An RNA of 207 nucleotides, treated with DMS and 2A3 and read out base by base.

[RMDB]
RNA sequence: GGGAACGACUCGAGUAGAGUCGAAAAGCAUGUGAAGGUGCUCACAACAGCUUACUUACAAUAAGGGAAAAGCUGACAGCGGGGGAAGUGUCUGAGCUAAGCACAUUACAGCCCACCUCUUCCACAGGUUAUUGUACAGCCACUAUAAAGAGUCAUGCUACAUAUCAAACUUCGGUUUGAUAUGUAGAAAAGAAACAACAACAACAAC
Reactivity to DMS in 0.01 (KOAc 150mM, MgCl2 10mM, bicine 150mM(pH8.5), 24C), signal-to-noise 2, nucleotides 027 to 156: g030c030a060u000g020u000g000a050a100g030g040u000g000c010u000c080a070c040a130a120c000a090g020c000u000u020a100c000u000u000a160c070a140a100u000a150a170g000g040g020a080a060a090a090g040c000u000g020a000c110a090g020c020g000g000g030g030g020a020a090g000u010g000u020c030u000g040a100g030c020u000a040a100g000c070a060c070a020u000u000a090c070a070g010c000c040c040a060c030c020u000c040u000u010c010c030a110c090a130g020g020u000u000a030u010u000g000u000a080c080a070g010c010c040a060c050u000a050u000a110a040a060g000a070g030u000c040a090u000g020
Reactivity to 2A3 in 0.01 (KOAc 150mM, MgCl2 10mM, bicine 150mM(pH8.5), 24C), signal-to-noise 6, nucleotides 027 to 156: g020c020a030u060g020u030g070a070a050g080g010u070g010c010u030c030a070c020a050a140c030a030g010c000u040u030a020c000u080u080a040c090a150a250u190a170a110g010g010g020a050a190a040a000g010c010u030g050a040c060a050g020c080g020g000g000g000g020a030a060g010u020g040u060c060u060g050a020g020c040u050a050a030g010c040a030c010a040u050u150a060c060a040g020c020c000c010a030c000c010u030c000u070u030c030c020a050c010a050g050g030u090u060a080u080u120g030u050a030c030a030g010c030c010a030c030u110a070u110a150a110a010g080a010g040u060c030a020u090g000

For DMS the reverse transcriptase was MarathonRT. Source: RMDB library OK3TST, as collected in RNAgym. The reactions ran in a buffer of 150 mM KOAc, 10 mM MgCl2 and 150 mM bicine (pH 8.5), at 24 C. Reactivities are given for positions 27 through 156.